Structure probing data (2A3) for a 207-nucleotide construct. Reactivities are rounded to 0.1 and cut off at 0 and 3.

RNA sequence: GGGAACGACUCGAGUAGAGUCGAAAAGAUAUGGACUUCUGAUAAGAGGCAACAGCUAUGGUCACAGCCCAUUCGGAAACGAAUGGGUCACAGCCAUAGACAUGCCUCGAAACAGAAGUCCUAAGUCAAAAGAGAUAUCACUUCGGUGAUAUCUCAACACUUCCCGUAGGUUCGCCUACGGGAAGUGAAAAGAAACAACAACAACAAC
Reactivity to 2A3 in 0.01 (KOAc 150mM, MgCl2 10mM, bicine 150mM(pH8.5), 24C), signal-to-noise 2, nucleotides 027 to 156: g030a020u110a060u120g000g000a000c000u010u020c000u000g040a090u060a130a050g000a010g010g000c010a050a080c030a210g000c010u000a010u010g000g020u130c030a020c030a030g000c000c000c010a000u000u000c000g010g050a040a090a100c000g000a010a010u000g000g000g000u010c010a000c010a000g030c010c010a000u000a000g030a020c000a030u020g000c000c020u010c000g000a000a000a000c000a000g020a000a000g000u010c000c000u000a000a010g000u000c030a030a060a040a060g000a000g000a010u040a010u000c010a000c030u060u120c300g060g000u000g010a000u000a000u000c000u000c010a000a000
It was measured as part of the RMDB library RNAMAK.